[RMDB]
RNA sequence: GGGAACGACUCGAGUAGAGUCGAAAAACAAAGAGAUCGAAAGAGCAAUGUGUAACUCAUCAUCCUAGCGAAUGGUUGGGCUCGAAAGUUCGAGUGUUACCAUCACAUCCCGGACGCUAGAAAAAAAUCGACAUAUAAGCUUCGGCUUAUAUGUCGAAAAAGAAACAACAACAACAAC
Reactivity to DMS in 0.01 (KOAc 150mM, MgCl2 10mM, bicine 150mM(pH8.5), 24C), signal-to-noise 1, nucleotides 027 to 126: a150c210a090a120a080g000a110g000a030u000c070g010a080a030a090g010a010g000c030a090a040u000g010u010g050u010a070a080c110u010c070a090u000c010a050u020c050c010u000a010g010c030g020a190a050u000g020g000u000u000g000g000g000c000u000c000g000a060a200a100g010u000u030c020g000a020g010u000g000u020u000a070c010c010a000u000c110a050c100a090u010c010c010c000g000g010a300c010g010c000u010a010g040a000a000a040a040a080a020a090
Reactivity to 2A3 in 0.01 (KOAc 150mM, MgCl2 10mM, bicine 150mM(pH8.5), 24C), signal-to-noise 1, nucleotides 027 to 126: a000c050a000a120a000g080a000g020a050u090c060g060a060a050a040g030a040g000c040a010a130u100g110u020g010u040a050a000c010u000c040a110u040c000a020u000c050c020u000a010g000c010g070a070a020u010g000g040u030u020g030g060g000c000u030c010g120a200a170a070g140u140u000c020g010a000g010u070g300u120u020a020c000c000a010u020c030a040c010a120u030c010c030c000g050g010a020c000g000c010u020a010g000a050a020a000a000a000a000a040